[RMDB]
RNA sequence: GGGAACGACUCGAGUAGAGUCGAAAACGGAAUAGGGCUUUCGGGACACUUAUUCCUUUGCUUAAGACCAACUCUGUUUUCGCCUUUGCCCCUUCAUCAUUAUACAAAAUGUCUACCAUUACCACACAAGUAGAAACUAAUUCGUUAGUUUCUACUUAAAAGAAACAACAACAACAAC
Reactivity to 2A3 in 0.01 (KOAc 150mM, MgCl2 10mM, bicine 150mM(pH8.5), 24C), signal-to-noise 9, nucleotides 027 to 126: c030g010g030a020a040u090a090g030g010g020c020u040u060u110c110g050g020g030a030c050a020c130u060u060a050u070u050c000c000u040u080u100g050c030u060u080a060a020g030a050c000c010a030a060c040u010c020u050g060u040u020u030u040c040g020c010c000u040u040u080g010c000c010c010c000u060u030c020a090u020c010a050u040u160a090u060a180c090a050a130a030a040u100g030u010c010u020a040c010c020a050u050u080a060c030c020a060c010a020c010
Reactivity to DMS in 0.01 (KOAc 150mM, MgCl2 10mM, bicine 150mM(pH8.5), 24C), signal-to-noise 9, nucleotides 027 to 126: c110g010g010a040a040u000a100g000g000g010c030u000u000u010c090g010g000g010a090c150a110c110u010u000a040u000u000c010c010u010u010u020g020c130u010u000a060a060g010a080c020c020a080a120c150u010c030u000g010u000u000u010u010c060g010c040c020u000u000u000g010c020c020c010c030u010u000c050a050u010c050a040u010u010a070u010a090c160a060a040a060a060u010g010u000c030u000a090c040c020a060u000u000a120c050c040a070c170a080c180